[RMDB]
This 177-nucleotide RNA was probed chemically with DMS and 2A3. Source: RMDB library OK2TST, as collected in RNAgym. For DMS, 713 sequencing reads were counted. DMS adducts were read by reverse transcription with MarathonRT. For 2A3 the reverse transcriptase was SuperScript II with manganese. The reactions ran in a buffer of 150 mM KOAc, 10 mM MgCl2 and 150 mM bicine (pH 8.5), at 24 C.
RNA sequence: GGGAACGACUCGAGUAGAGUCGAAAAUGUAAUAAACCACCGCUCAUAUCUUGUACAACAUCUAAGCCUUUUUUAUAACCAUAAGUUACGCCAUAGUAACGUGUAGCAAGACGAACAAGGUUAAAUACCAUUGCGUGAAUUUCGAUUCACGCAAUGGAAAAGAAACAACAACAACAAC
Reactivity to DMS in 0.01 (KOAc 150mM, MgCl2 10mM, bicine 150mM(pH8.5), 24C), signal-to-noise 1, nucleotides 027 to 126: u000g000u030a150a120u010a000a120a120c050c020a100c030c090g000c000u010c060a060u010a050u000c000u020u000g000u010a000c070a180a080c110a030u010c030u000a070a190g010c020c030u000u000u000u000u000u000a060u010a140a040c010c050a000u000a050a100g000u000u010a000c180g020c030c080a100u000a040g020u020a020a060c180g000u010g020u000a030g020c060a000a090g000a060c080g060a000a050c160a120a080g000g020u000u020a050a050a100u000a190
Reactivity to 2A3 in 0.01 (KOAc 150mM, MgCl2 10mM, bicine 150mM(pH8.5), 24C), signal-to-noise 2, nucleotides 027 to 126: u060g030u050a030a010u100a160a190a030c000c050a040c020c010g050c020u060c010a030u030a020u060c000u030u080g000u050a040c020a090a000c000a110u000c020u090a000a120g020c020c000u050u010u080u030u030u010a140u060a160a090c010c020a110u060a140a030g000u000u010a010c000g010c040c050a100u060a110g020u020a020a020c060g000u010g000u000a020g010c070a070a000g040a080c030g030a050a020c020a010a070g120g000u070u080a000a000a050u080a090